[RMDB]
RNA sequence: GGGAACGACUCGAGUAGAGUCGAAAAGGACUAUGGCAUUGACCCUUCUGAGGUACAGGAUGUAGGUCCAUCAAUCUUAACAGGGCGGGAUUCCACAGUUUCUGUAUCCAGGUCUGUUAGCGCGCGCAAGAACCUAAGAGUUCGCUCUUAGGUUCUUAAAAGAAACAACAACAACAAC
Reactivity to DMS in 0.01 (KOAc 150mM, MgCl2 10mM, bicine 150mM(pH8.5), 24C), signal-to-noise 6, nucleotides 027 to 126: g010g010a060c020u000a060u010g020g020c040a070u000u000g000a160c070c030c030u000u010c160u000g010a100g010g010u010a080c110a100g000g000a040u000g010u000a070g010g000u010c010c020a080u000c110a080a150u010c050u000u000a040a080c100a050g020g000g010c120g000g020g000a040u000u000c090c120a050c050a050g010u000u000u000c020u010g020u000a070u000c020c010a030g010g000u000c030u000g010u000u000a050g020c110g010c070g020c120g000c190
Reactivity to 2A3 in 0.01 (KOAc 150mM, MgCl2 10mM, bicine 150mM(pH8.5), 24C), signal-to-noise 3, nucleotides 027 to 126: g030g000a030c030u060a060u180g060g010c020a070u040u120g070a100c000c040c000u130u050c090u140g090a120g010g020u080a100c030a030g080g020a020u020g030u090a030g020g050u050c020c000a010u050c010a000a060u020c010u040u060a040a020c010a030g010g040g000c050g060g020g030a030u190u070c060c030a010c010a060g050u090u100u120c030u030g010u010a030u000c000c010a040g080g270u000c010u000g030u000u040a030g010c050g020c010g000c000g000c090